[RMDB]
RNA sequence: GGGAACGACUCGAGUAGAGUCGAAAACUGUCCUGUGUGGAACUACGUGAGUAGUUCACGCUCUACGGGAGUAGAGCCACACAGAUCGUGGAGCGAUGUCUUGGAACUACUCCCGUAGUUCACGUAUGACUCACGUCAUACCAAGACGACAGCCACGGACGUAGUGAGCUUUCGAGCUCACUACGUCAAAAGAAACAACAACAACAAC
Reactivity to 2A3 in 0.01 (KOAc 150mM, MgCl2 10mM, bicine 150mM(pH8.5), 24C), signal-to-noise 3, nucleotides 027 to 156: c010u000g010u020c000c000u030g030u040g040u090g070g020a020a000c020u010a000c020g050u020g010a040g010u010a020g000u040u050c030a040c010g020c000u000c000u010a010c000g020g000g020a070g000u060a010g030a030g100c050c010a030c010a000c010a000g070a050u040c010g000u080g080g100a100g100c020g030a080u080g070u060c070u060u140g060g000a030a030c000u020a000c010u010c070c020c000g000u000a000g000u020u070c050a040c060g030u030a020u070g030a000c000u010c130a060c120g000u000c000a000u010a040c020c000a040a040g000a040c040g000a000c010a000g030c000c010a050c010g070